[RMDB]
RNA sequence: GGGAACGACUCGAGUAGAGUCGAAAAGAUAUGGAGGACGACGAAGACGGACAUGAUGACCUCGGAAACGAGCAAGUGUUCGUCAGAGUCCUCCUAAGUCAAAGCACGGUCGUUCGCGACCGUGCAAGUCGCAUACUACGUUCGCGUAGUAUGCGACAAAAGAAACAACAACAACAAC
Reactivity to DMS in 0.01 (KOAc 150mM, MgCl2 10mM, bicine 150mM(pH8.5), 24C), signal-to-noise 2, nucleotides 027 to 126: g020a020u010a300u010g000g010a020g000g020a010c000g040a100c230g000a110a070g000a010c000g000g000a010c000a020u020g000a200u010g000a040c300c000u000c000g010g020a100a140a110c010g040a010g010c020a050a160g040u000g020u020u000c000g010u000c000a020g000a220g000u000c000c000u010c020c000u020a000a050g010u000c070a050a100a170g000c010a010c000g000g010u000c000g050u010u040c260g040c020g010a000c000c010g010u000g000c000a000a030
Reactivity to 2A3 in 0.01 (KOAc 150mM, MgCl2 10mM, bicine 150mM(pH8.5), 24C), signal-to-noise 1, nucleotides 027 to 126: g000a040u090a070u130g030g010a000g010g000a030c080g000a010c070g060a140a050g020a010c000g020g040a000c000a020u120g070a210u150g060a150c030c000u010c040g000g030a000a150a000c010g000a030g000c030a300a210g010u000g020u000u020c000g000u010c000a000g000a000g000u000c000c010u000c000c000u000a070a010g000u000c050a190a070a000g050c000a010c000g000g040u030c010g000u000u130c270g040c010g250a010c000c000g000u000g040c000a010a010